Overview
An RNA of 207 nucleotides, treated with DMS and 2A3 and read out base by base.
[RMDB]
RNA sequence: GGGAACGACUCGAGUAGAGUCGAAAAACAAGCCUGUAAUCCUAGCUACUCGGAGGUUGAGGCAGGAAAAUUGCUUGAACCCGGGAGGCAGAGGUUGCAGAGCCAAGAUCGCGCCAUUGGACUGAGCUUGGGCAAUAAGAGCGAAACUCUGUCUAAACUAUACUUGGACGUUCGCGUCCAAGUAUAGAAAAGAAACAACAACAACAAC
Reactivity to DMS in 0.01 (KOAc 150mM, MgCl2 10mM, bicine 150mM(pH8.5), 24C), signal-to-noise 2, nucleotides 027 to 156: a080c070a140a150g050c010c000u000g010u000a110a090u000c010c010u000a120g060c030u000a170c030u000c000g020g010a080g020g000u010u000g030a050g030g050c030a060g000g010a120a060a140a120u000u010g040c000u010u000g000a060a060c000c000c000g020g020g050a300g000g040c000a070g010a110g010g030u000u000g020c000a030g010a140g090c000c010a040a050g020a050u010c000g030c090g060c010c010a190u040u000g000g010a150c080u010g030a070g010c070u000u000g000g000g000c000a040a050u000a050a150g000a100g020c050g070a050a060a300c010u010c050u000g000u000c020u000a060a080a230
Reactivity to 2A3 in 0.01 (KOAc 150mM, MgCl2 10mM, bicine 150mM(pH8.5), 24C), signal-to-noise 4, nucleotides 027 to 156: a000c050a040a000g040c000c010u000g000u030a020a050u040c010c010u020a040g020c000u100a130c020u050c020g140g020a230g070g030u020u050g060a020g010g000c020a020g060g000a100a120a050a090u130u030g000c000u010u010g050a000a010c000c010c000g010g010g000a080g030g000c030a020g050a030g060g000u010u020g000c000a010g030a000g050c020c000a030a030g040a080u100c050g020c020g030c160c040a050u060u120g020g010a050c040u040g010a020g040c040u080u080g040g040g000c020a050a080u140a180a030g050a020g030c050g030a040a040a050c020u010c030u050g040u040c010u060a070a050a060

The RNA was probed in 150 mM KOAc, 10 mM MgCl2 and 150 mM bicine (pH 8.5) at 24 C. The data come from the RNA Mapping Database (RMDB), library OK3TST. For DMS the reverse transcriptase was MarathonRT. As a SHAPE reagent, 2A3 marks flexible, mostly unpaired nucleotides at the ribose 2'-OH.